[RMDB]
RNA sequence: GGGAACGACUCGAGUAGAGUCGAAAAAUAAAUUGUGCGUCCCUCCCGAAGCUGCGCGCUCGGUCGAAGAGGACGACCAUCGCCGAUAGAGGACGACCGGUCUUCGGUCAAGGGAAAAAGAAAAAAACGAUAUUAGACGGUUCGCCGUCUAAUAUCGAAAAGAAACAACAACAACAAC
Reactivity to 2A3 in 0.01 (KOAc 150mM, MgCl2 10mM, bicine 150mM(pH8.5), 24C), signal-to-noise 2, nucleotides 027 to 126: a000u130a010a040a060u120u150g080u090g050c030g010u000c010c010c000u000c020c000c000g030a060a040g000c030u070g020c030g000c010g010c200u010c070g000g000u030c050g010a060a040g070a110g080g000a020c020g000a010c010c000a060u100c030g050c070c000g050a060u080a140g110a060g050g050a070c020g010a030c030c000g090g030u150c040u130u120c030g000g050u020c020a020a060g040g000g030a040a030a000a060a030g090a020a020a000a000a050a010a000
Reactivity to DMS in 0.01 (KOAc 150mM, MgCl2 10mM, bicine 150mM(pH8.5), 24C), signal-to-noise 2, nucleotides 027 to 126: a060u000a070a060a100u000u000g020u000g010c050g000u000c010c010c020u000c030c000c010g010a060a050g020c040u000g010c130g020c100g000c040u000c040g020g000u000c110g020a060a050g000a130g010g000a040c050g000a040c010c060a090u010c070g020c060c020g000a130u000a100g010a140g000g020a080c080g010a090c090c050g020g000u000c070u000u000c020g020g010u000c040a050a120g000g020g010a020a050a070a090a060g030a000a010a050a040a040a050a160